[RMDB]
RNA sequence: GGGAACGACUCGAGUAGAGUCGAAAAUGCGCCUCCUUCAGUAUUUCGUUCUCAUCAAAGUGAAUGACUUUUGAGUGCACUCAUUAGCCACUCGCACAAUCGACAAAACGGGAGGAACAACAAAUUGAUUAAAUGGCAGGUUCGCCUGCCAUUUAAUAAAAGAAACAACAACAACAAC
Reactivity to DMS in 0.01 (KOAc 150mM, MgCl2 10mM, bicine 150mM(pH8.5), 24C), signal-to-noise 1, nucleotides 027 to 126: u020g020c120g010c010c040u000c010c000u000u000c050a090g010u010a030u000u000u010c050g000u000u000c000u020c040a180u010c210a060a050a170g020u000g010a020a020u000g000a030c010u010u010u000u000g010a000g030u000g010c260a160c040u000c030a010u000u020a010g010c030c010a010c050u000c000g020c000a090c210a060a060u000c130g010a110c220a050a020a040a070c150g040g030g010a010g000g020a030a030c030a050a010c060a030a060a120u020u020g000